[RMDB]
RNA sequence: GGGAACGACUCGAGUAGAGUCGAAAAGGAGAUCGAAGAGGACCGACGUCAGCACGGUCAGGAUGUAGGUCCGCAUGCAUCCGAGUUGACGAAACUUGACGAUUUCCAAAGCGGACAAGAAGUCAAACAUACCCUGAGUAUUCGUACUCAGGGUAUGAAAAGAAACAACAACAACAAC
Reactivity to 2A3 in 0.01 (KOAc 150mM, MgCl2 10mM, bicine 150mM(pH8.5), 24C), signal-to-noise 8, nucleotides 027 to 126: g010g000a010g000a010u010c020g010a070a020g050a050g120g060a020c030c050g060a050c010g030u080c060a020g020c110a030c080g130g100u070c050a030g030g000a000u000g000u010a000g010g000u000c000c000g000c000a000u000g000c000a000u000c000c010g010a010g020u020u030g030a050c070g050a090a080a110c020u010u010g020a020c010g000a010u000u000u000c000c000a080a040a010g010c000g000g010a000c020a020a060g110a110a010g100u060c060a050a020a010
Reactivity to DMS in 0.01 (KOAc 150mM, MgCl2 10mM, bicine 150mM(pH8.5), 24C), signal-to-noise 7, nucleotides 027 to 126: g000g000a030g000a010u000c000g010a090a290g000a060g000g010a100c170c150g010a120c010g000u010c050a060g020c040a110c130g010g010u020c180a090g000g010a000u000g010u000a060g000g000u000c000c000g010c000a040u000g000c010a000u000c000c000g000a130g000u000u000g000a040c050g000a080a050a040c010u000u000g000a300c000g010a040u000u000u000c010c020a040a070a100g000c000g010g010a020c010a150a110g010a100a100g000u010c080a060a110a220